RNA sequence: GGGAACGACUCGAGUAGAGUCGAAAAUGCUGAGAACCCUGCAGCUAUGCUAAGAUCUCUCCUAAAUGAUCCAGACAUUGAUGUUCAAUUGGCUGAGAUUGCGGACAUCGACAAUGACAAACUAAAGUUGGCUACCAGAGGCAAAGAAAUGAGCCGCCAGUAUACGGUCUUUCGAGACCGUAUACUGAAAAGAAACAACAACAACAAC
Reactivity to DMS in 0.01 (KOAc 150mM, MgCl2 10mM, bicine 150mM(pH8.5), 24C), signal-to-noise 2, nucleotides 027 to 156: u000g010c030u000g000a130g020a040a090c040c030c030u000g030c040a040g050c050u000a040u000g040c020u000a110a100g010a100u000c030u000c010u000c090c020u010a030a140a130u000g000a020u000c040c000a090g000a080c050a100u000u000g020a120u000g020u010u010c030a080a070u000u000g030g000c040u000g010a120g020a020u000u010g030c070g010g010a080c020a040u000c040g020a010c030a050a080u010g020a110c050a060a080a130c050u000a040a070a140g010u000u000g020g000c020u000a110c030c060a110g010a070g000g050c020a090a110a130g030a050a070a140u010g020a300g020c020c000g010c060
Reactivity to 2A3 in 0.01 (KOAc 150mM, MgCl2 10mM, bicine 150mM(pH8.5), 24C), signal-to-noise 3, nucleotides 027 to 156: u070g000c000u030g020a060g020a120a080c000c010c030u010g020c000a020g000c040u060a070u120g010c030u040a040a070g020a150u010c020u010c010u010c020c030u090a130a170a010u160g000a030u010c030c010a010g060a120c030a090u080u150g050a050u100g070u080u110c020a060a040u160u030g040g000c020u010g030a030g030a180u050u080g010c030g010g020a020c000a010u030c050g030a020c040a060a060u160g010a040c030a060a070a000c040u110a040a030a050g050u100u070g030g040c010u040a050c020c020a040g020a070g070g020c040a110a010a000g060a060a160a030u110g040a040g010c000c000g030c000